[RMDB]
RNA sequence: GGGAACGACUCGAGUAGAGUCGAAAAAGACGGCUAUAUGGUUGUUAUUGAUACUGGUGUGAAAGGUUCAACAAGACAAGCGGUAGAAGAUGUUCAUAAACUUUGUGAGGAUCCUCAGUACAUGUCAGGUCGUUAGACAAUUCGUUGUCUAACGACCAAAAGAAACAACAACAACAAC
Reactivity to 2A3 in 0.01 (KOAc 150mM, MgCl2 10mM, bicine 150mM(pH8.5), 24C), signal-to-noise 2, nucleotides 027 to 126: a010g080a000c050g010g000c070u000a000u040a050u300g040g000u020u000g000u000u010a100u140u160g060a090u000a050c000u010g070g000u140g060u000g070a120a100a000g010g000u050u020c040a000a030c040a050a010g080a070c040a060a000g000c050g130g000u090a000g010a100a020g020a020u040g100u240u040c010a090u170a060a040a100c080u000u160u000g010u040g020a070g030g020a050u060c000c030u040c000a000g060u030a030c040a080u120g120u070c030a020

Chemical mapping of a 177-nucleotide RNA with 2A3. It was measured as part of the RMDB library OK1LIB.